RNA sequence: GGGAACGACUCGAGUAGAGUCGAAAAGAUAUGGAUCUGUGGUGCAACAGCCUUGAGGUCGGAAACGACCUAAGGACAUGCACGCACAGAUCCUAAGUCAAAACAAACCUUCUUCGGAAGGUUUGAAGCUCUUUAUACAGUUCGCUGUAUAAAGAGCAAAAGAAACAACAACAACAAC
Reactivity to 2A3 in 0.01 (KOAc 150mM, MgCl2 10mM, bicine 150mM(pH8.5), 24C), signal-to-noise 7, nucleotides 027 to 126: g000a010u020a010u060g000g000a000u000c000u000g000u030g020g020u020g020c300a300a070c100a300g040c030c040u020u050g300a030g000g010u000c010g010g000a010a020a010c000g000a000c000c010u000a000a000g010g010a010c050a150u300g000c000a000c020g130c000a010c000a000g000a000u000c000c000u000a000a000g010u000c010a010a020a100a200c010a000a000a000c000c010u010u020c000u020u080c230g190g000a000a000g000g000u000u000u000g000a010a010
Reactivity to DMS in 0.01 (KOAc 150mM, MgCl2 10mM, bicine 150mM(pH8.5), 24C), signal-to-noise 3, nucleotides 027 to 126: g010a030u000a110u010g000g000a000u000c000u010g030u010g010g030u000g010c010a140a080c260a210g000c000c000u000u000g020a020g010g020u000c000g020g000a030a030a070c010g020a010c000c000u000a010a000g010g010a020c040a170u020g010c010a000c010g010c010a000c000a000g010a000u000c000c000u000a000a070g000u000c010a160a090a140a300c010a000a010a010c000c000u000u000c000u000u020c230g020g000a030a010g010g000u000u000u000g000a090a160